[RMDB]
RNA sequence: GGGAACGACUCGAGUAGAGUCGAAAACAAGCACGGAAGAGGAACAAUAAUUAAAAGUGCAUCCAAAAUACAAUCACAUUUACUUGAACUUAGAUCUAGUGACAUAAACAAGAAUGUAACAGAAGAAGAUGCUAUAUGUUGCAAACUUCAACAAGGACCCUACAAAAUAAUUCGUUAUUUUGUAGGGAAAAGAAACAACAACAACAAC
Reactivity to DMS in 0.01 (KOAc 150mM, MgCl2 10mM, bicine 150mM(pH8.5), 24C), signal-to-noise 3, nucleotides 027 to 156: c060a100a090g020c040a070c020g030g030a110a070g040a100g010g000a090a160c050a090a100u000a080a110u010u000a020a060a070a120g040u000g020c100a100u010c040c020a070a110a090a090u000a070c050a070a080u000c260a040c040a100u010u020u000a060c060u030u000g010a300a110c090u000u000a100g000a110u000c020u000a060g020u000g010a090c090a040u010a030a070a120c030a020a060g010a030a040u000g040u000a040a090c020a050g010a050a100g030a060a060g000a090u000g000c020u000a090u000a110u000g020u000u000g010c020a070a060a090c050u000u000c060a040a080c070a030a090g010g000a110
Reactivity to 2A3 in 0.01 (KOAc 150mM, MgCl2 10mM, bicine 150mM(pH8.5), 24C), signal-to-noise 7, nucleotides 027 to 156: c030a020a030g020c010a010c040g040g030a030a020g040a030g050g020a060a030c040a040a070u180a100a070u160u140a070a120a050a010g040u030g010c020a020u020c020c010a050a040a030a020u110a050c050a030a060u080c050a030c020a050u060u080u130a070c030u030u060g030a120a020c020u070u060a080g030a120u080c030u040a030g030u020g080a020c020a090u140a050a110a010c030a020a030g030a030a020u060g000u060a050a020c020a040g030a060a000g020a030a010g030a070u040g000c010u020a020u020a020u280g050u030u010g000c000a030a070a070c020u060u080c020a010a040c000a060a020g090g020a040